The record gives the reactivity of an RNA of 177 nucleotides to 2A3.
For 2A3 the reverse transcriptase was SuperScript II with manganese.
Reactivities are given for positions 27 through 126.
The data come from the RNA Mapping Database (RMDB), library OK1LIB.
For 2A3, 425 sequencing reads were counted.

RNA sequence: GGGAACGACUCGAGUAGAGUCGAAAAGGCAUUGGACUGGUCAGUGAAGGCAGCAACUGAGCUGCGGUCGCCACGUGCGGAAACUACCACCGAUGCUGUUGGGCACGAGUCCACAACGCCUCCCACACCCUGCGCGUGAUUUCGAUCACGCGCAGGGAAAAGAAACAACAACAACAAC
Reactivity to 2A3 in 0.01 (KOAc 150mM, MgCl2 10mM, bicine 150mM(pH8.5), 24C), signal-to-noise 1, nucleotides 027 to 126: g000g000c000a000u000u000g000g080a080c300u100g000g000u100c120a000g090u000g090a300a000g100g000c000a000g000c060a060a100c170u240g020a000g000c000u050g040c070g000g000u050c000g070c000c000a130c290g120u300g030c000g000g030a000a010a010c000u060a140c080c000a030c130c000g000a000u090g000c080u000g130u000u050g000g000g000c070a080c180g120a040g000u030c000c000a020c030a140a050c000g000c000c030u000c000c000c000a060c000a000